[RMDB]
Conditions: 150 mM KOAc, 10 mM MgCl2 and 150 mM bicine (pH 8.5), 24 C. An RNA of 207 nucleotides, treated with 2A3 and DMS and read out base by base. It was measured as part of the RMDB library OK3TST. For 2A3, 7,734 sequencing reads were counted. For 2A3 the reverse transcriptase was SuperScript II with manganese. Reactivities are given for positions 27 through 156. 2A3 is a SHAPE reagent: it acylates the 2'-hydroxyl of flexible nucleotides of all four kinds.

RNA sequence: GGGAACGACUCGAGUAGAGUCGAAAAGCAGAGGGCAGAAAGCAUUGCUGAGAUUAGAGUCAUUUGGCCCUCAGAAGGAACAGACAAAGAGAAGGAAAUUGGCUGGUGCAUUAAUCAUCACUAGCUUCAGGGAGCUAUGUGGAGGCCAAGGCACAUCGCGAUAUAAUAGAUUCGUCUAUUAUAUCGCAAAAGAAACAACAACAACAAC
Reactivity to 2A3 in 0.01 (KOAc 150mM, MgCl2 10mM, bicine 150mM(pH8.5), 24C), signal-to-noise 7, nucleotides 027 to 156: g040c040a040g000a030g010g010g010c030a020g030a040a050a040g010c040a030u050u160g040c050u100g050a090g000a140u050u130a070g020a030g060u030c020a090u070u070u160g030g010c020c000c000u030c010a010g030a040a020g060g020a040a050c030a060g100a020c040a030a060a020g060a020g010a030a020g050g020a040a070a100u090u050g030g000c020u030g010g010u010g010c020a020u040u150a080a050u120c080a010u030c010a000c020u010a010g000c000u070u040c010a010g050g030g000a030g000c020u040a050u230g030u030g020g020a020g020g000c000c020a020a040g020g000c030a020c010a060u260c110
Reactivity to DMS in 0.01 (KOAc 150mM, MgCl2 10mM, bicine 150mM(pH8.5), 24C), signal-to-noise 4, nucleotides 027 to 156: g070c020a040g010a050g020g030g050c020a090g000a040a030a070g020c040a100u000u000g020c040u000g020a190g000a130u000u000a100g020a090g000u000c040a220u010u010u000g040g020c010c010c000u010c040a110g010a070a060g000g010a070a110c090a120g000a130c040a070a060a130g020a090g020a060a040g030g010a040a050a140u000u000g010g000c050u000g040g000u010g000c140a300u000u000a090a100u010c050a130u010c020a020c030u000a030g020c020u000u010c070a160g010g010g020a050g030c010u010a030u000g010u010g000g000a120g000g030c030c020a030a080g010g010c020a040c040a100u000c080